RNA sequence: GGGAACGACUCGAGUAGAGUCGAAAAGAUAUGGAUGUAGACAUGAGGAUAAGUCGGAAACGACUUAAUCUCAACAGCUACACGUCCUAAGUCAAAACUGUGACAUAUGUUCGCAUAUGUCACAGAACAAGAAGAAUUACUUCGGUAAUUCUUCUUGAAAAGAAACAACAACAACAAC
Reactivity to DMS in 0.01 (KOAc 150mM, MgCl2 10mM, bicine 150mM(pH8.5), 24C), signal-to-noise 8, nucleotides 027 to 126: g000a080u010a170u010g010g010a120u000g000u000a010g000a030c070a260u000g010a020g010g010a060u000a000a010g010u000c000g010g010a100a080a200c010g010a010c000u000u000a010a020u000c000u000c010a030a080c220a150g000c010u000a010c020a050c100g000u000c000c000u000a050a120g010u010c130a070a070a120a160c010u010g010u000g000a020c000a000u000a000u000g000u010u010c230g020c000a000u000a010u000g000u000c000a000c000a010g010a060a130
Reactivity to 2A3 in 0.01 (KOAc 150mM, MgCl2 10mM, bicine 150mM(pH8.5), 24C), signal-to-noise 7, nucleotides 027 to 126: g050a010u110a020u180g050g020a020u020g000u010a000g040a100c090a240u110g030a050g040g010a010u000a020a000g000u010c010g040g000a060a040a020c020g000a000c000u010u020a080a140u010c020u000c020a090a160c060a040g040c000u010a010c040a010c130g040u000c010c010u080a140a070g080u040c060a020a030a170a220c020u000g010u010g000a000c010a000u010a000u020g050u030u090c280g020c150a000u020a000u000g000u000c000a000c000a010g000a000a010
Source information:
Chemical mapping of a 177-nucleotide RNA with DMS and 2A3. Reactivities are rounded to 0.1 and cut off at 0 and 3. It was measured as part of the RMDB library TTRDEL. The DMS profile rests on 11,924 reads.